[RMDB]
RNA sequence: GGGAACGACUCGAGUAGAGUCGAAAAGGAUAGGUUUCGACCUAUCCAAAAAAGAUAUGGAUCGUCGUCCAGGGAGGAUCGUACAUCGGAAACGAUGUACGUCCUUUGAUCUGGACGAGCGAUCCUAAGUCAAAAAACAUAGUGUUCGCACUAUGAACUAGAAUAACAACUUCGGUUGUUAUUCUAGAAAAGAAACAACAACAACAAC
Reactivity to DMS in 0.01 (KOAc 150mM, MgCl2 10mM, bicine 150mM(pH8.5), 24C), signal-to-noise 2, nucleotides 027 to 156: g020g000a000u000a010g020g000u010u000u000c240g040a080c000c000u000a000u000c000c000a000a040a050a060a040a040g000a140u000a300u000g010g000a010u000c000g000u000c000g010u000c000c000a040g010g020g000a020g020g010a040u030c070g060u000a020c000a010u000c010g020g000a240a110a300c000g010a010u010g020u000a010c010g020u000c000c000u000u000u020g030a040u000c010u000g000g000a010c020g000a020g030c010g000a000u000c000c000u000a010a070g020u000c010a000a070a080a170a150a150c010a020u000a000g020u000g000u000u000c300g020c010a040c010u000a020u000g000a090a210
Reactivity to 2A3 in 0.01 (KOAc 150mM, MgCl2 10mM, bicine 150mM(pH8.5), 24C), signal-to-noise 4, nucleotides 027 to 156: g000g000a000u010a000g030g010u040u150u200c260g080a060c000c010u010a010u000c000c010a050a050a000a000a000a010g080a030u080a030u070g000g010a000u000c000g020u010c000g010u000c000c000a000g000g000g010a010g010g000a060u230c100g000u000a000c000a000u000c000g030g030a070a050a050c010g000a000u000g000u000a000c000g010u000c000c000u090u060u020g000a010u010c000u000g000g010a000c000g000a000g000c010g000a010u000c000c000u010a020a010g020u010c040a000a030a010a020a090a110c000a000u030a020g010u020g060u100u080c290g060c090a000c000u020a000u030g010a020a020

Structure probing data (DMS and 2A3) for a 207-nucleotide construct.
The RNA was probed in 150 mM KOAc, 10 mM MgCl2 and 150 mM bicine (pH 8.5) at 24 C.
For 2A3 the reverse transcriptase was SuperScript II with manganese.
Source: RMDB library RNAMAK, as collected in RNAgym.